[RMDB]
RNA sequence: GGGAACGACUCGAGUAGAGUCGAAAACUUUUUUUCGUUUUUGGAUAGGUUCAGAUUUUGUGUGUCCUUUAUGUUUUUCUCUUAAACGUAAUGAAGGGGUGUUAUAUCGAAGGGUGGUUAAUUAACGCGAUAAGAUUUGUUUCGACAAAUUUUAUCGAAAAGAAACAACAACAACAAC
Reactivity to DMS in 0.01 (KOAc 150mM, MgCl2 10mM, bicine 150mM(pH8.5), 24C), signal-to-noise 6, nucleotides 027 to 126: c030u000u000u010u030u010u010u020c060g010u010u000u010u010u020g000g010a060u020a050g000g010u010u000c060a060g000a080u010u010u010u020g020u020g010u010g000u000c030c010u000u010u010a050u020g000u010u000u010u010u010c090u010c070u010u010a030a030a050c060g010u010a020a030u020g010a070a040g000g010g010g010u000g000u010u020a060u020a070u010c040g000a080a070g000g010g020u000g010g000u010u010a030a080u030u020a060a100c230g010
Reactivity to 2A3 in 0.01 (KOAc 150mM, MgCl2 10mM, bicine 150mM(pH8.5), 24C), signal-to-noise 6, nucleotides 027 to 126: c010u110u060u020u030u020u120u190c070g010u040u030u000u090u070g040g010a040u040a090g030g030u050u070c050a030g050a160u070u070u140u110g100u030g030u000g060u070c000c000u030u090u070a110u060g040u040u040u010u070u020c040u000c000u030u050a040a040a020c020g050u010a030a060u100g060a040a030g030g010g000g000u050g060u060u080a170u030a060u120c030g010a020a030g010g000g050u050g010g030u020u020a040a050u100u040a070a040c070g010
The data come from the RNA Mapping Database (RMDB), library OK1LIB. An RNA of 177 nucleotides, treated with DMS and 2A3 and read out base by base. For DMS, 24,374 sequencing reads were counted. Conditions: 150 mM KOAc, 10 mM MgCl2 and 150 mM bicine (pH 8.5), 24 C. Reactivities are given for positions 27 through 126.